The record gives the reactivity of an RNA of 177 nucleotides to 2A3 and DMS. It was measured as part of the RMDB library OK2TRN. The reactions ran in a buffer of 150 mM KOAc, 10 mM MgCl2 and 150 mM bicine (pH 8.5), at 24 C. 2A3 adducts were read by reverse transcription with SuperScript II with manganese.
RNA sequence: GGGAACGACUCGAGUAGAGUCGAAAAGCGUGGUUAUCGUUUGAGCUAGCGCUCAACAAGAUGCGUGCCAACUCACCCUGCCCCGGGGAGGCGCGAUGAGUCGACAGUGGCACUGGCUGGCAGCGACACGAGUAACCCAGUUCGCUGGGUUACUCGUAAAAGAAACAACAACAACAAC
Reactivity to 2A3 in 0.01 (KOAc 150mM, MgCl2 10mM, bicine 150mM(pH8.5), 24C), signal-to-noise 2, nucleotides 027 to 126: g060c020g020u070g000g090u160u140a060u130c050g010u000u070u130g000a000g000c010u070a050g030c030g020c130u030c010a010a040c050a010a040g080a100u150g030c020g020u000g000c010c010a070a110c030u070c050a080c000c040c030u010g050c030c000c010c040g000g020g010g000a020g000g010c020g000c010g040a060u110g050a020g040u050c010g020a030c020a070g040u060g000g000c020a000c030u020g080g000c020u020g040g020c020a020g020c020g000a010c010
Reactivity to DMS in 0.01 (KOAc 150mM, MgCl2 10mM, bicine 150mM(pH8.5), 24C), signal-to-noise 2, nucleotides 027 to 126: g010c090g060u010g010g000u000u000a030u000c070g000u000u000u010g010a080g000c000u020a140g010c270g010c000u000c000a040a050c130a100a100g000a080u000g020c050g030u000g000c020c020a040a070c100u020c130a140c010c010c030u010g000c030c020c040c100g000g020g000g000a210g000g000c020g020c080g000a060u020g020a120g000u020c010g000a110c080a060g000u000g000g020c030a150c020u010g000g000c020u000g020g060c050a080g010c040g000a110c080